[RMDB]
An RNA of 177 nucleotides, treated with DMS and read out base by base. The RNA was probed in 150 mM KOAc, 10 mM MgCl2 and 150 mM bicine (pH 8.5) at 24 C. The DMS profile rests on 556 reads. It was measured as part of the RMDB library OK2TST.
RNA sequence: GGGAACGACUCGAGUAGAGUCGAAAAUUGGUCAGCACCCCAAACAAGCCGCCGGCGUUCAACCCAUGGGGCGCCACCAGGCGGUGCGACAAGAGGUGAAGCCGCAGGUAAGCAUCGUAUGGGUCAGCACUGCCAGUGUGUUCGCACACUGGCAGUGAAAAGAAACAACAACAACAAC
Reactivity to DMS in 0.01 (KOAc 150mM, MgCl2 10mM, bicine 150mM(pH8.5), 24C), signal-to-noise 1, nucleotides 027 to 126: u000u020g000g010u010c020a110g010c050a150c070c020c020c050a040a140a100c120a100a270g030c000c000g040c120c050g030g000c020g000u010u000c040a040a050c080c000c000a100u020g020g000g000g020c010g010c020c090a090c060c200a300g000g010c090g000g000u000g020c110g030a120c150a050a110g000a040g020g000u030g000a050a110g020c050c020g030c000a090g000g000u010a070a110g010c010a050u010c060g020u040a070u000g010g040g000u020c120a080g020